[RMDB]
RNA sequence: GGGAACGACUCGAGUAGAGUCGAAAAUAGACACCAGCGCCUAUUACGUUAUGUCAGUUGGUGAGAAGUCCUUCCUGGUUCACCGAGAAUGGUUUAUGGAUCUGAACCUGCCAUGGAGCAGUGCUGGCCUAUACCGUGAGUUCGCUCACGGUAUAGGAAAAGAAACAACAACAACAAC
Reactivity to DMS in 0.01 (KOAc 150mM, MgCl2 10mM, bicine 150mM(pH8.5), 24C), signal-to-noise 6, nucleotides 027 to 126: u000a060g000a130c100a170c020c020a030g000c030g020c070c030u000a060u000u010a110c140g020u000u010a070u000g010u000c060a080g020u000u000g020g020u010g000a070g020a090a110g010u010c030c060u000u000c040c010u000g000g000u010u000c060a050c030c030g000a080g000a080a060u000g010g010u010u010u010a060u020g010g010a110u010c060u000g000a090a080c110c020u000g010c040c020a110u000g000g000a090g010c090a060g010u010g020c050u000g010g000
Reactivity to 2A3 in 0.01 (KOAc 150mM, MgCl2 10mM, bicine 150mM(pH8.5), 24C), signal-to-noise 4, nucleotides 027 to 126: u050a010g030a020c020a000c060c000a000g000c010g020c010c020u050a070u110u150a060c110g080u200u080a070u120g080u060c080a080g030u060u050g030g040u040g020a040g020a060a010g050u080c000c010u000u060c020c000u020g040g000u030u030c030a010c050c020g040a040g080a150a100u120g010g060u020u070u090a080u130g070g020a050u010c060u060g030a050a080c000c000u000g000c020c000a220u210g070g030a100g000c020a000g030u030g020c020u020g040g030